[RMDB]
RNA sequence: GGGAACGACUCGAGUAGAGUCGAAAAGCGGCGCGCGGGAGACACUGCCGAAGCACGCCAUCAUUGCGACCACGACGAAGAUGCCCGGCUCGUGGGGCACCCCGGGCAGCUCGGUGAGCUCGCCUAGACGUCUCCUCAGAUUCGUCUGAGGAGACGUAAAAGAAACAACAACAACAAC
Reactivity to 2A3 in 0.01 (KOAc 150mM, MgCl2 10mM, bicine 150mM(pH8.5), 24C), signal-to-noise 3, nucleotides 027 to 126: g060c010g000g010c010g030c010g000c040g080g040g050a060g040a050c090a030c120u140g070c010c000g020a060a020g040c010a030c030g000c050c000a020u160c040a040u070u220g060c010g030a070c010c020a030c010g030a010c010g050a110a040g060a100u110g040c010c010c020g060g000c050u070c070g070u050g000g010g040g040c040a060c000c000c000c000g000g000g000c010a010g000c030u050c030g120g040u130g050a030g000c020u050c050g030c020c010u030a070g030
Reactivity to DMS in 0.01 (KOAc 150mM, MgCl2 10mM, bicine 150mM(pH8.5), 24C), signal-to-noise 1, nucleotides 027 to 126: g050c210g040g030c010g010c140g010c040g000g010g000a250g000a150c020a040c060u000g000c050c060g020a180a140g000c040a000c040g000c030c020a060u010c020a040u040u050g000c020g000a090c030c000a000c000g000a060c050g090a120a040g000a220u000g000c040c050c000g000g020c120u010c060g020u060g000g000g080g000c060a000c070c050c000c000g000g000g000c000a020g000c010u000c010g000g000u010g000a080g010c040u000c010g010c000c010u010a040g000